[RMDB]
RNA sequence: GGGAACGACUCGAGUAGAGUCGAAAAAUGCCGCAUUCAGCGACGGUAACUCUAGUGGGCAACUGUCUAUCUAGCGUUGACAUCUACAUACUAUAUAGUAAUACCAAUACUCAAGACUACGAAACGGACCGAUCAGUAUGUUCGCAUACUGAUCGGUAAAAGAAACAACAACAACAAC
Reactivity to 2A3 in 0.01 (KOAc 150mM, MgCl2 10mM, bicine 150mM(pH8.5), 24C), signal-to-noise 5, nucleotides 027 to 126: a020u160g030c010c000g030c030a090u100u100c060a030g040c000g110a070c020g020g000u020a030a040c000u010c020u040a010g000u020g000g000g020c030a140a200c290u110g020u000c000u000a060u060c000u000a010g020c000g060u020u050g040a030c020a100u030c000u060a030c030a030u090a040c030u040a030u060a040u060a210g060u080a100a040u000a180c030c010a040a070u010a040c020u020c060a010a110g070a080c030u110a070c100g090a070a050a030c040g020g040
Reactivity to DMS in 0.01 (KOAc 150mM, MgCl2 10mM, bicine 150mM(pH8.5), 24C), signal-to-noise 2, nucleotides 027 to 126: a030u070g000c010c000g060c090a200u000u010c220a090g020c070g000a020c030g040g010u020a050a030c030u040c020u010a050g060u010g010g000g000c020a300a050c140u000g000u010c000u000a070u120c020u030a020g000c080g050u050u000g000a080c040a080u030c040u030a080c110a020u040a040c010u000a130u040a090u040a080g010u000a020a070u000a070c090c040a030a040u040a040c030u000c090a000a090g000a040c050u030a070c060g000a100a070a010c200g000g000
Chemical mapping of a 177-nucleotide RNA with 2A3 and DMS.
For 2A3 the reverse transcriptase was SuperScript II with manganese.
For 2A3, 4,073 sequencing reads were counted.
The DMS profile rests on 2,338 reads.
Conditions: 150 mM KOAc, 10 mM MgCl2 and 150 mM bicine (pH 8.5), 24 C.
For DMS the reverse transcriptase was MarathonRT.